[RMDB]
RNA sequence: GGGAACGACUCGAGUAGAGUCGAAAACGGUUGGUUCCGAGGGGGGUGUGAUCCAGGUACCGCCGUAGAAACUGGAUUACGACGUCUACCCGGGAUUCAAACCCGGUCCCCCUCAGAGGUGACUCUGAGUGAAAGGUCGUGCUUAGCACACUGACGAGUUUUAGUAUUCCUUCGGGAAUACUAAAACAAAAGAAACAACAACAACAAC
Reactivity to DMS in 0.01 (KOAc 150mM, MgCl2 10mM, bicine 150mM(pH8.5), 24C), signal-to-noise 1, nucleotides 027 to 156: c010g040g050u000u000g050g030u000u000c030c020g010a170g000g000g020g000g080g090u010g010u010g020a010u000c020c030a050g040g020u000a170c090c030g030c030c160g010u000a110g010a070a220a280c030u000g010g000a100u000u010a110c040g010a090c050g010u010c010u000a050c020c010c000g020g040g000a070u000u000c050a070a020a020c010c000c020g010g000u010c000c000c040c020c000u010c000a030g010a070g010g010u060g000a300c010u000c000u000g000a040g000u030g010a100a130a200g100g000u030c070g030u000g000c010u050u000a150g000c090a030c060a060c030u050g030a060c060g010a240
Reactivity to 2A3 in 0.01 (KOAc 150mM, MgCl2 10mM, bicine 150mM(pH8.5), 24C), signal-to-noise 2, nucleotides 027 to 156: c010g000g020u010u040g040g000u020u010c010c000g020a300g020g000g000g020g000g060u000g000u000g010a000u000c000c000a000g000g010u060a080c110c140g040c050c070g080u020a050g120a030a250a010c000u000g000g010a050u040u030a040c240g100a010c070g240u040c070u150a300c000c010c020g010g020g000a210u300u300c050a020a040a070c030c020c000g000g010u010c010c000c000c040c000u000c000a000g000a000g000g040u130g030a010c000u000c000u010g020a020g000u130g080a220a010a090g050g000u030c020g000u030g000c020u070u100a060g000c060a010c000a000c090u110g030a010c050g060a020
This 207-nucleotide RNA was probed chemically with DMS and 2A3. Source: RMDB library VIROID, as collected in RNAgym. For DMS the reverse transcriptase was MarathonRT. For 2A3, 898 sequencing reads were counted.